[RMDB]
Source information: An RNA of 207 nucleotides, treated with 2A3 and read out base by base. 2A3 adducts were read by reverse transcription with SuperScript II with manganese. Conditions: 150 mM KOAc, 10 mM MgCl2 and 150 mM bicine (pH 8.5), 24 C. The 2A3 profile rests on 657 reads. It was measured as part of the RMDB library OK3TST.
RNA sequence: GGGAACGACUCGAGUAGAGUCGAAAAGACGAAGACCUGCUCGCGUUACCUGCGGCCGUCUUCCAGCAGCGCCUGGCUGGGCACUUCAACGUACGAGUGCACGGCUACGACAUAGAGAGCUUCGUCACGCGAAACAAAAAGUACCUGAACCUCAACGGGCACCGAUCGCAUUCGUGCGAUCGGUGCCAAAAGAAACAACAACAACAAC
Reactivity to 2A3 in 0.01 (KOAc 150mM, MgCl2 10mM, bicine 150mM(pH8.5), 24C), signal-to-noise 1, nucleotides 027 to 156: g050a000c070g000a000a010g030a040c010c010u070g050c040u040c000g080c000g040u040u150a130c020c010u040g040c030g030g070c020c020g010u070c020u160u080c040c000a010g000c000a010g020c080g020c100c000u160g010g000c000u000g000g040g000c000a030c040u040u050c040a200a140c060g190u240a030c080g040a000g000u000g000c000a000c040g000g000c030u020a000c020g040a030c000a140u210a020g040a000g000a020g060c000u000u000c000g000u040c010a050c030g000c020g020a060a100a010c010a130a040a010a030a000g020u070a030c000c050u040g000a040a040c000c000u040c040a030a080c250g000